[RMDB]
RNA sequence: GGGAACGACUCGAGUAGAGUCGAAAAUUUGAGCAAGGAGGACUAAUAGGGCAACAGUUUGGGCACCUAAUGCUACUUAGCUAAGCUAUCUUACCACGGGCUGUUAGUAAAUUUCUACUGGGGAAAGCCAGCAGUAAGAGUUCGCUCUUACUGCUGGAAAAGAAACAACAACAACAAC
Reactivity to DMS in 0.01 (KOAc 150mM, MgCl2 10mM, bicine 150mM(pH8.5), 24C), signal-to-noise 2, nucleotides 027 to 126: u000u000u020g000a070g010c050a050a080g000g010a050g090g010a110c050u000a050a130u000a090g010g000g000c000a060a070c090a070g020u010u000u000g000g000g030c080a070c100c010u020a080a080u000g010c050u000a060c060u000u010a060g000c030u000a060a100g000c060u000a060u010c060u010u000a020c080c060a100c090g010g000g010c050u000g010u000u010a060g000u000a040a040a080u000u010u010c050u000a020c030u020g020g010g000g000a090a110a150g000
Reactivity to 2A3 in 0.01 (KOAc 150mM, MgCl2 10mM, bicine 150mM(pH8.5), 24C), signal-to-noise 1, nucleotides 027 to 126: u040u040u060g040a000g040c050a020a030g050g030a040g040g000a020c020u110a100a100u130a170g040g100g000c000a040a050c020a120g030u080u060u120g070g010g020c030a030c050c010u080a060a020u150g020c050u020a040c050u130u150a020g000c000u040a050a030g000c010u030a020u080c010u020u110a080c020c030a040c020g040g020g000c010u020g010u100u020a010g000u020a010a100a140u040u100u080c050u040a100c010u040g000g000g000g040a000a000a080g030
Description: Chemical mapping of a 177-nucleotide RNA with DMS and 2A3. For DMS, 1,614 sequencing reads were counted. For DMS the reverse transcriptase was MarathonRT. The 2A3 profile rests on 830 reads.